Chemical mapping of a 177-nucleotide RNA with DMS and 2A3. The reactions ran in a buffer of 150 mM KOAc, 10 mM MgCl2 and 150 mM bicine (pH 8.5), at 24 C. DMS adducts were read by reverse transcription with MarathonRT. For 2A3 the reverse transcriptase was SuperScript II with manganese.
[RMDB]
RNA sequence: GGGAACGACUCGAGUAGAGUCGAAAAGCUUAAGGCUUCCAAACUUACCUUAAUUUGGUAAGAAAAUAAGCUGCCCUAUUUUUCUUUCUUCUUCUCUUACAACUGGAACCAGCCAUUUCCCCAAACUAGGUUAUACAUAGUUCGCUAUGUAUAACCUAAAAGAAACAACAACAACAAC
Reactivity to DMS in 0.01 (KOAc 150mM, MgCl2 10mM, bicine 150mM(pH8.5), 24C), signal-to-noise 2, nucleotides 027 to 126: g010c020u000u000a080a100g020g000c080u020u010c050c050a040a210a160c010u000u010a010c020c020u000u020a170a190u000u000u000g010g000u000a000a010g000a150a040a090a110u000a020a050g010c010u010g010c040c020c030u010a010u010u000u010u020u000c020u000u010u000c020u010u000c050u010u000c040u000c030u000u010a040c060a090a050c080u000g030g010a030a040c040c020a060g000c000c020a080u010u010u000c010c000c000c180a060a110a080c260u020
Reactivity to 2A3 in 0.01 (KOAc 150mM, MgCl2 10mM, bicine 150mM(pH8.5), 24C), signal-to-noise 2, nucleotides 027 to 126: g000c000u080u050a060a000g070g020c010u130u030c020c020a050a060a040c000u010u010a030c000c000u150u160a160a110u300u160u080g010g000u010a000a010g000a050a110a010a020u020a020a020g010c030u030g010c010c000c010u040a150u090u100u010u070u010c000u040u090u010c000u040u000c000u030u020c020u010c000u040u110a100c030a120a040c090u030g000g040a060a070c020c000a020g000c000c000a020u020u020u020c000c010c000c000a010a060a020c070u020